[RMDB]
RNA sequence: GGGAACGACUCGAGUAGAGUCGAAAAGAUAUGGAUGUGUGUAACAGUCAACAGCCUAGGUCGGAAACGACCUAGGACAUGACUUUACCACAUCCUAAGUCAAAAGACCUUGGUUCGCCAAGGUCAAUCCAAUAACAUCGUUCGCGAUGUUAUUGGAAAAAGAAACAACAACAACAAC
Reactivity to DMS in 0.01 (KOAc 150mM, MgCl2 10mM, bicine 150mM(pH8.5), 24C), signal-to-noise 4, nucleotides 027 to 126: g030a020u000a300u010g010g010a030u000g010u010g010u020g010u000a000a000c300a030g020u010c010a040a070c230a210g000c010c000u010a000g000g010u010c000g020g000a110a090a240c010g020a010c000c000u000a000g000g000a020c060a120u010g000a030c010u000u000u010a000c010c010a000c000a000u010c000c000u000a000a090g010u010c050a090a110a120a130g010a020c000c000u000u000g000g000u000u010c300g010c000c020a020a010g000g000u000c010a000a060